[RMDB]
Conditions: 150 mM KOAc, 10 mM MgCl2 and 150 mM bicine (pH 8.5), 24 C. Structure probing data (DMS and 2A3) for a 207-nucleotide construct.
RNA sequence: GGGAACGACUCGAGUAGAGUCGAAAAUCAGAAUCAGGCCGGAGUGUUUUGCGCUCCGUAAACACGGUCGUACAUCCAGCCGGUAGCCUGGUUCCUUGCAUUGAGUGAUGUACGGAGUUUAUAGAGCAAAAGAAAGACCUGUUCGCAGGUCUUUCAACAGUCUUAGUAGGUUCGCCUACUAAGACUGAAAAGAAACAACAACAACAAC
Reactivity to DMS in 0.01 (KOAc 150mM, MgCl2 10mM, bicine 150mM(pH8.5), 24C), signal-to-noise 1, nucleotides 027 to 156: u000c030a070g000a040a040u000c010a010g000g050c000c020g040g020a110g020u000g000u000u000u000u030g010c080g000c000u010c000c020g040u020a010a010a110c040a130c100g000g040u020c010g070u000a040c000a020u000c010c000a190g020c020c080g030g000u000a080g010c030c010u000g000g020u000u010c000c000u000u010g020c080a190u000u000g000a200g000u010g030a050u010g020u000a020c020g030g010a120g030u000u010u000a100u000a100g000a050g000c060a130a060a120a210g010a010a030a040g010a040c000c000u000g000u000u000c250g050c010a020g000g000u000c000u030u000u000c010a050a210
Reactivity to 2A3 in 0.01 (KOAc 150mM, MgCl2 10mM, bicine 150mM(pH8.5), 24C), signal-to-noise 4, nucleotides 027 to 156: u080c000a000g030a000a000u000c000a000g010g000c020c010g030g000a020g000u050g040u040u120u150u260g070c020g000c000u010c010c000g000u030a010a030a010c160a010c080g060g040u060c030g000u020a020c000a020u010c030c020a040g060c020c000g020g040u040a010g000c000c010u010g000g000u010u000c010c020u070u090g020c030a140u060u160g050a040g050u160g020a010u000g010u010a000c040g070g010a080g010u100u200u040a190u090a050g100a010g050c040a050a050a020a050g000a000a000a000g000a010c000c010u020g020u050u060c170g010c110a000g000g000u010c000u000u000u000c010a000a000
It was measured as part of the RMDB library M2RFOK. For DMS the reverse transcriptase was MarathonRT. The DMS profile rests on 3,136 reads.